[RMDB]
RNA sequence: GGGAACGACUCGAGUAGAGUCGAAAAGCUUGCCUUAGCUGACUUGAAGCCCAUUGAUUUAUGCCGUGCGCCGAGCGGCGGCGCAAUUGAUAGUCUGCUUAUGCAACAAGGACCUCCCGAUGGGCCCUAAUCAUACCAGGUUCGCCUGGUAUGAUUAAAAAGAAACAACAACAACAAC
Reactivity to 2A3 in 0.01 (KOAc 150mM, MgCl2 10mM, bicine 150mM(pH8.5), 24C), signal-to-noise 9, nucleotides 027 to 126: g010c070u040u070g010c010c020u050u060a010g000c020u030g040a070c030u050u070g100a060a030g040c000c020c020a050u030u090g080a080u040u110u170a130u210g030c020c030g030u090g100c020g040c040c080g070a060g080c060g070g000c000g000g000c010g020c020a020a060u080u070g050a050u040a040g010u010c010u020g010c020u040u030a030u080g070c030a040a030c010a080a050g040g020a050c000c010u040c020c020c010g040a050u060g010g020g010c000c000c010
Reactivity to DMS in 0.01 (KOAc 150mM, MgCl2 10mM, bicine 150mM(pH8.5), 24C), signal-to-noise 6, nucleotides 027 to 126: g000c060u000u010g020c040c050u010u010a050g010c000u000g000a060c050u010u000g000a170a110g000c040c030c030a110u020u020g000a100u030u020u020a060u020g000c030c030g040u010g010c000g010c020c070g000a250g020c090g000g010c020g010g000c030g020c070a040a030u030u020g000a050u000a030g010u010c020u000g000c020u000u020a060u000g000c040a060a050c100a100a090g000g000a070c090c020u000c030c020c010g030a090u010g000g000g000c010c040c040